[RMDB]
RNA sequence: GGGAACGACUCGAGUAGAGUCGAAAACCACGGCGGCCGGGCCAACGCGCUUGAUGAUCUGGUCACGCCGCUGGCCCACAAGGCCACCGAUAUGCGCACUAGAGGAAACCAACGGCUCAGGCCGGGCAAUUCACGCAUUUUUCGAAAUGCGUGAAUUAAAAGAAACAACAACAACAAC
Reactivity to DMS in 0.01 (KOAc 150mM, MgCl2 10mM, bicine 150mM(pH8.5), 24C), signal-to-noise 4, nucleotides 027 to 126: c000c010a280c040g000g020c040g020g020c010c010g000g000g000c010c000a000a020c020g010c180g020c020u000u000g010a010u000g030a140u050c160u060g000g000u000c000a010c040g000c010c030g000c080u010g000g000c000c000c000a160c160a160a200g000g020c000c000a050c000c000g000a120u010a040u020g000c030g020c070a040c050u020a050g010a070g000g000a080a060a130c060c070a140a120c040g000g000c010u020c190a130g010g010c010c010g020g010g000c090
Reactivity to 2A3 in 0.01 (KOAc 150mM, MgCl2 10mM, bicine 150mM(pH8.5), 24C), signal-to-noise 6, nucleotides 027 to 126: c000c000a020c000g000g020c010g000g000c000c020g000g010g000c010c000a000a010c020g070c020g020c030u040u030g010a020u040g030a110u150c140u300g120g010u000c000a000c030g000c000c000g000c010u000g000g000c000c000c010a100c090a080a080g010g000c000c000a000c000c000g010a030u040a080u210g070c060g000c020a030c050u080a060g020a040g120g060a070a060a040c020c010a070a070c030g010g020c020u020c080a080g120g000c010c010g020g010g000c020